Chemical mapping of a 177-nucleotide RNA with DMS and 2A3. The RNA was probed in 150 mM KOAc, 10 mM MgCl2 and 150 mM bicine (pH 8.5) at 24 C. 2A3 adducts were read by reverse transcription with SuperScript II with manganese. For 2A3, 1,413 sequencing reads were counted. Source: RMDB library OK1LIB, as collected in RNAgym.
RNA sequence: GGGAACGACUCGAGUAGAGUCGAAAAGGCUGGGUUGGCUGGGGUGGUUGCUGGUCGGCCGGAGGCUGGGGUGGUCUGCGGUGUUGGCAAGCCGGCGGGCAAGACGGCUUUUGUGUUUGCCGGUCAGUACAUGCUUAGGUUUCGACCUAAGCAUGUAAAAAGAAACAACAACAACAAC
Reactivity to DMS in 0.01 (KOAc 150mM, MgCl2 10mM, bicine 150mM(pH8.5), 24C), signal-to-noise 2, nucleotides 027 to 126: g010g000c050u010g010g000g020u040u030g000g000c140u020g000g000g000g020u020g000g000u010u010g000c030u010g000g010u020c070g010g000c010c010g000g000a030g000g020c040u010g000g000g000g010u020g010g020u000c040u000g000c050g010g020u010g000u000u020g000g020c180a110a130g000c000c020g000g000c050g010g010g020c050a050a060g010a060c030g020g000c020u000u020u040u010g040u010g000u000u020u020g020c000c010g000g010u020c080a090g040
Reactivity to 2A3 in 0.01 (KOAc 150mM, MgCl2 10mM, bicine 150mM(pH8.5), 24C), signal-to-noise 2, nucleotides 027 to 126: g150g020c100u040g020g040g120u250u110g120g000c190u060g010g010g000g110u100g000g000u030u040g040c020u010g060g060u090c040g030g000c000c050g050g030a000g000g100c060u030g050g020g000g060u070g020g030u010c040u030g030c030g000g000u030g040u010u080g040g060c020a010a040g000c020c020g010g020c040g000g000g020c020a050a000g050a030c010g020g000c000u060u030u050u040g110u040g030u010u030u060g020c000c000g010g010u080c010a030g010